[RMDB]
The data come from the RNA Mapping Database (RMDB), library RFM100. An RNA of 177 nucleotides, treated with 2A3 and DMS and read out base by base. For DMS, 754 sequencing reads were counted. For 2A3 the reverse transcriptase was SuperScript II with manganese. Values cover nucleotides 27 to 126.

RNA sequence: GGGAACGACUCGAGUAGAGUCGAAAAACAACUUGGAGUUGCAGGUAGGCGGCAAGUGAGUUCAUCCCCAUGAGCAUAGACGGGCUAUGUGAUUGGGGUGAACGAACGCAGCCCCCCUGCAGCUUCAUGGACUUCUGAGGUUCGCCUCAGAAGUCCAAAAAGAAACAACAACAACAAC
Reactivity to 2A3 in 0.01 (KOAc 150mM, MgCl2 10mM, bicine 150mM(pH8.5), 24C), signal-to-noise 2, nucleotides 027 to 126: a000c030a020a060c010u050u020g000g000a010g000u000u010g000c000a000g000g010u090a080g000g050c050g000g000c010a090a110g000u010g000a010g000u000u000c020a200u300c030c020c000c000a000u000g000a000g000c000a000u010a030g070a110c190g060g070g150c000u010a010u000g050u070g010a010u000u000g000g000g010g000u010g010a000a000c000g000a000a000c000g010c040a010g000c000c000c000c010c000c000u000g000c000a000g000c000u000u010c000a010
Reactivity to DMS in 0.01 (KOAc 150mM, MgCl2 10mM, bicine 150mM(pH8.5), 24C), signal-to-noise 1, nucleotides 027 to 126: a030c160a050a160c060u020u000g040g010a010g000u000u000g000c000a000g020g000u000a020g000g000c220g000g000c000a110a040g000u000g010a300g000u000u010c000a000u070c040c000c000c050a000u000g000a300g000c040a000u050a020g000a300c230g020g000g000c000u000a000u000g000u000g000a300u000u000g000g050g000g030u000g050a000a000c040g000a020a100c000g000c300a300g000c000c000c000c170c000c000u010g040c040a000g010c000u000u000c040a000